[RMDB]
RNA sequence: GGGAACGACUCGAGUAGAGUCGAAAACGCAGAUGAAGCCGAGCCGCUGCCGGAAGUGCGGCGGCGCGGUGCUCGCGGGCUACGUCACUGGGACGGUGACGCUGCUCGACCCGGCGCACUUGUCUUUGCUGGGGGAGACGAUCGCGCUGCUGGCUGGCGCAUCCCCUAAAUUCGUUUAGGGGAUGCGAAAAGAAACAACAACAACAAC
Reactivity to 2A3 in 0.01 (KOAc 150mM, MgCl2 10mM, bicine 150mM(pH8.5), 24C), signal-to-noise 1, nucleotides 027 to 156: c060g040c020a050g030a110u140g100a130a000g000c000c000g000a000g040c000c010g030c000u020g000c010c020g270g200a290a110g050u260g170c010g000g010c020g020g010c000g000c000g010g000u010g000c050u010c020g010c020g000g000g010c020u070a020c020g000u000c000a030c020u090g000g190g300a010c110g030g000u000g000a000c000g000c000u010g010c000u000c010g030a080c000c000c010g000g000c010g030c050a040c090u020u100g030u140c000u140u200u200g110c190u150g010g010g000g020g050a000g000a020c010g020a020u060c070g010c000g000c000u000g010c020u020g090g000c020u030g040g030